Structure probing data (DMS) for a 177-nucleotide construct. DMS adducts were read by reverse transcription with MarathonRT. Reactivities are given for positions 27 through 126.
RNA sequence: GGGAACGACUCGAGUAGAGUCGAAAAGAUAUGGAGAACGGAGACUGAUGACCACUUAAGUGGCCGAGGCUACUCGGAAACGAGUAGUACAGCCACUUAAGUGCAAGGUUGACGUUCUCCUAAGUCAUCUGCAGAUAUUCUUCGGAAUAUCUGCAGAAAAAGAAACAACAACAACAAC
Reactivity to DMS in 0.01 (KOAc 150mM, MgCl2 10mM, bicine 150mM(pH8.5), 24C), signal-to-noise 1, nucleotides 027 to 126: g040a040u000a300u020g050g000a000g040a010a010c010g020g000a300g040a050c020u010g010a080u000g000a110c300c020a020c000u000u000a010a000g010u000g000g020c020c000g020a300g010g000c000u010a000c000u000c000g010g000a070a270a150c000g020a050g000u000a000g000u000a000c000a020g020c000c000a010c000u000u000a030a000g010u000g020c010a050a030g010g010u000u000g000a300c030g000u000u000c000u000c000c000u000a000a060g000u000c040a210